[RMDB]
RNA sequence: GGGAACGACUCGAGUAGAGUCGAAAACGCUGGGAUAUUAGAGAGACCCAUAGCAAGACAACUUAGCCACUGAAGCGCGCACGGUGGCUAAGUUGUUGAUGACCUAUGGACCUCUCGAUAUCCUGUGCUGAAGCGCGCACGGCAACCGAAAGGUGCGGAAGAAAACGAACUUCGGUUCGUUUUCUUCAAAAGAAACAACAACAACAAC
Reactivity to 2A3 in 0.01 (KOAc 150mM, MgCl2 10mM, bicine 150mM(pH8.5), 24C), signal-to-noise 1, nucleotides 027 to 156: c030g030c040u130g000g000g000a000u040a030u060u240a190g000a050g010a010g030a050c010c000c000a000u010a010g020c050a160a300g020a000c000a000a000c000u000u010a000g000c010c000a000c000u000g010a170a060g040c010g000c000g000c010a030c020g020g010u000g000g050c000u000a000a000g000u000u000g000u010u000g010a000u030g040a010c010c000u000a010u010g000g030a010c030c020u040c000u000c000g000a000u000a000u000c000c000u000g010u010g000c030u090g040a090a020g000c000g000c000g000c020a010c030g110g000c040a090a150c030c000g020a090a090a060g010g000u010g040c030g030